Chemical mapping of a 207-nucleotide RNA with 2A3.

RNA sequence: GGGAACGACUCGAGUAGAGUCGAAAAAGCACGGUUUUUGAGAACGCAUUUUGUCCGUGCGGUAAUGCCCUCCUUUACACUUUCUCGCAUGGUGCGGGAGUGUGGAGAGGAAACAAAAGCUAGUCUCGAUAGGCGGUUAACUUCGGUUAACCGCCAAGUGAGGGAAAGUGUUCGCACUUUCCCUCACAAAAGAAACAACAACAACAAC
Reactivity to 2A3 in 0.01 (KOAc 150mM, MgCl2 10mM, bicine 150mM(pH8.5), 24C), signal-to-noise 1, nucleotides 027 to 156: a000g090c000a000c000g000g050u000u000u000u000u000g140a130g010a050a010c030g030c130a160u000u000u000u030g000u000c000c000g000u000g000c030g010g000u170a120a070u200g010c000c000c000u030c000c010u010u030u050a000c000a000c000u110u200u060c000u000c020g010c060a080u220g110g090u240g100c000g000g000g000a050g000u020g000u000g000g000a010g000a000g000g000a000a020a000c000a000a000a000a000g000c000u030a060g010u050c020u000c110g090a130u160a240g000g000c000g000g010u010u000a000a000c020u040u140c170g010g000u020u000a000a000c000c000g000c010c000a000a000

Annotation
The reactions ran in a buffer of 150 mM KOAc, 10 mM MgCl2 and 150 mM bicine (pH 8.5), at 24 C. Reactivities are given for positions 27 through 156. The data come from the RNA Mapping Database (RMDB), library M2RFOK. For 2A3 the reverse transcriptase was SuperScript II with manganese.